[RMDB]
RNA sequence: GGGAACGACUCGAGUAGAGUCGAAAACACACACCGACAUGGGCAUGGUGGAGGCGUCGACGUCGGAACUGCACCUGGAGGCCCCAAAUUCGUACACGUACCUCCUGGCGACCGUCAGCCUGACGCAAUGCCUGCGGUAUUUCGAUACCGCAGGCAUAAAAGAAACAACAACAACAAC
Reactivity to DMS in 0.01 (KOAc 150mM, MgCl2 10mM, bicine 150mM(pH8.5), 24C), signal-to-noise 1, nucleotides 027 to 126: c040a180c110a250c180a050c070c050g010a090c020a080u000g090g020g000c150a020u020g000g050u000g000g000a040g010g000c040g000u000c000g000a020c010g000u000c000g030g000a000a080c070u050g010c000a030c060c060u000g000g000a030g000g000c070c040c000c050a000a040a060u000u110c040g030u020a120c050a220c130g000u000a270c030c000u030c000c000u000g000g000c080g000a120c000c040g000u000c100a040g100c000c020u010g000a010c000g000c060a120
Reactivity to 2A3 in 0.01 (KOAc 150mM, MgCl2 10mM, bicine 150mM(pH8.5), 24C), signal-to-noise 2, nucleotides 027 to 126: c100a000c010a010c030a000c000c010g080a060c090a220u300g050g020g000c030a080u120g070g000u040g000g100a070g000g030c000g010u100c070g020a020c000g000u050c000g000g120a150a050c070u080g000c070a050c000c010u030g060g000a020g000g020c000c040c000c000a000a240a110u140u110c010g040u100a020c160a010c080g060u060a090c020c010u040c000c010u060g030g000c060g030a080c010c000g010u040c050a040g140c010c000u000g040a040c010g000c040a000
Annotation: The record gives the reactivity of an RNA of 177 nucleotides to DMS and 2A3. For DMS, 1,072 sequencing reads were counted. It was measured as part of the RMDB library OK1LIB. In probing experiments dimethyl sulfate is read out at A N1 and C N3, which are open when not base-paired. The 2A3 profile rests on 1,012 reads. The RNA was probed in 150 mM KOAc, 10 mM MgCl2 and 150 mM bicine (pH 8.5) at 24 C.